An RNA of 177 nucleotides, treated with DMS and 2A3 and read out base by base. The reactions ran in a buffer of 150 mM KOAc, 10 mM MgCl2 and 150 mM bicine (pH 8.5), at 24 C. The data come from the RNA Mapping Database (RMDB), library OK1LIB. The DMS profile rests on 6,556 reads.
RNA sequence: GGGAACGACUCGAGUAGAGUCGAAAAGAAUACUUUUAGUACAAGCGAGUACACGCAGUAUACUGCCACGUGUGUGAGAAUACUUUUAGUACAAGCGAGUACACGCAGUAUACUGCCACUUGUGUGAGUGCACAACAUAAUUCGUUAUGUUGUGCACAAAAGAAACAACAACAACAAC
Reactivity to DMS in 0.01 (KOAc 150mM, MgCl2 10mM, bicine 150mM(pH8.5), 24C), signal-to-noise 5, nucleotides 027 to 126: g000a140a110u050a040c050u010u000u020u010a070g030u020a020c120a070a120g010c050g000a080g020u050a030c100a150c300g020c000a020g020u000a010u000a010c000u000g020c040c300a110c130g020u010g000u000g000u000g010a280g000a150a080u000a020c010u010u030u040u040a080g030u030a010c270a120a140g000c020g020a240g000u000a000c020a030c000g020c010a020g000u000a000u000a010c010u000g000c000c070a000c050u010u010g000u000g000u020g010a160
Reactivity to 2A3 in 0.01 (KOAc 150mM, MgCl2 10mM, bicine 150mM(pH8.5), 24C), signal-to-noise 8, nucleotides 027 to 126: g070a040a050u240a140c040u080u150u130u150a090g040u070a060c040a130a020g030c040g070a020g040u130a060c060a010c100g000c010a000g000u000a000u000a000c000u010g030c050c090a130c090g020u010g000u000g010u040g020a050g040a060a070u080a080c000u060u160u140u250a080g020u030a050c030a100a030g050c020g050a020g040u030a000c020a000c010g000c000a000g000u000a000u000a000c000u000g000c000c000a000c000u020u010g010u010g030u050g140a050